Description: Structure probing data (DMS) for a 177-nucleotide construct. Conditions: 150 mM KOAc, 10 mM MgCl2 and 150 mM bicine (pH 8.5), 24 C. For DMS the reverse transcriptase was MarathonRT.
RNA sequence: GGGAACGACUCGAGUAGAGUCGAAAAAGGGUGACCACUGGGAGCCAUGGGAUGCCUCUCCCGAUUCCGUCCAUCCCCCCCCCAGGAGGGUCGCCCAGGAAUGGCGGGACCCCACCUCAACAGGGUCGAUAGACUCAUUCUUCGGAAUGAGUCUAUCAAAAGAAACAACAACAACAAC
Reactivity to DMS in 0.01 (KOAc 150mM, MgCl2 10mM, bicine 150mM(pH8.5), 24C), signal-to-noise 2, nucleotides 027 to 126: a100g000g000g030u000g010a060c010c020a080c110u000g000g010g010a100g020c170c080a060u050g000g000g000a140u010g010c070c030u010c090u000c020c000c020g000a150u000u000c010c030g000u000c020c060a110u000c040c010c000c040c060c000c020c000c020a010g000g010a140g010g000g010u000c010g010c010c010c000a030g000g010a070a080u020g010g000c080g000g000g000a060c020c000c020c030a050c040c010u000c060a040a080c150a080g000g010g010u010c050